[RMDB]
RNA sequence: GGGAACGACUCGAGUAGAGUCGAAAAGGGGUCCCAAUGUUUAACGAGGCUCUGGCUCUUUGAUCGUACACUGAAGCCUCCACGGUGUACGGGAGAGCCAGCCUCGAAGUUGGGACGGAGGCACCCAAAACCAAGCGCUGUUCGCAGCGCUUGGUAACACCAUACCGAGUUUCGACUCGGUAUGGUGAAAAGAAACAACAACAACAAC
Reactivity to 2A3 in 0.01 (KOAc 150mM, MgCl2 10mM, bicine 150mM(pH8.5), 24C), signal-to-noise 1, nucleotides 027 to 156: g100g000g020g000u000c000c010c030a010a010u120g090u110u300u200a190a070c040g000a010g020g010c040u080c120u280g050g000c050u060c050u300u290u010g020a000u030c000g010u000a000c000a000c000u060g050a130a030g030c000c000u000c000c010a000c020g030g000u000g000u000a000c010g010g010g000a000g000a040g040c090c000a000g000c030c000u000c000g000a000a010g010u010u020g020g000g000a000c010g000g000a000g030g000c000a030c050c000c040a040a160a000a000c000c000a000a000g000c000g000c000u050g040u120u210c300g020c140a000g020c000g000c000u000u000g000g000u000a000a010
An RNA of 207 nucleotides, treated with 2A3 and read out base by base. The 2A3 profile rests on 804 reads. Source: RMDB library RNAMAK, as collected in RNAgym.